[RMDB]
Source: RMDB library RFM100, as collected in RNAgym. The record gives the reactivity of an RNA of 177 nucleotides to 2A3. The 2A3 profile rests on 282 reads.
RNA sequence: GGGAACGACUCGAGUAGAGUCGAAAAGUCUUUAUGUCUGUUUCUUACUUUGCUCAACUCUUUAACUUUUGUUAAGAAAUGAUCAUCUGCCAGCUCAAUUUCAAAGAAAGGUCCGACUGUUAAAAGGAGGGAGGAGUAAGUUCGCUUACUCCUCCCUAAAAGAAACAACAACAACAAC
Reactivity to 2A3 in 0.01 (KOAc 150mM, MgCl2 10mM, bicine 150mM(pH8.5), 24C), signal-to-noise 1, nucleotides 027 to 126: g040u040c040u100u280u250a170u250g000u000c110u050g000u000u040u090c000u020u000a160c010u120u300u030g050c000u000c010a000a050c090u050c010u000u000u270a040a000c090u080u000u110u300g050u040u070a100a000g000a050a030a080u060g000a020u150c000a010u000c000u020g010c000c000a000g000c120u000c060a090a140u010u110u090c020a080a030a040g000a000a200a000g020g000u040c000c020g040a000c020u000g040u140u110a010a000a010a010g040g020

The RNA was probed in 150 mM KOAc, 10 mM MgCl2 and 150 mM bicine (pH 8.5) at 24 C. 2A3 adducts were read by reverse transcription with SuperScript II with manganese.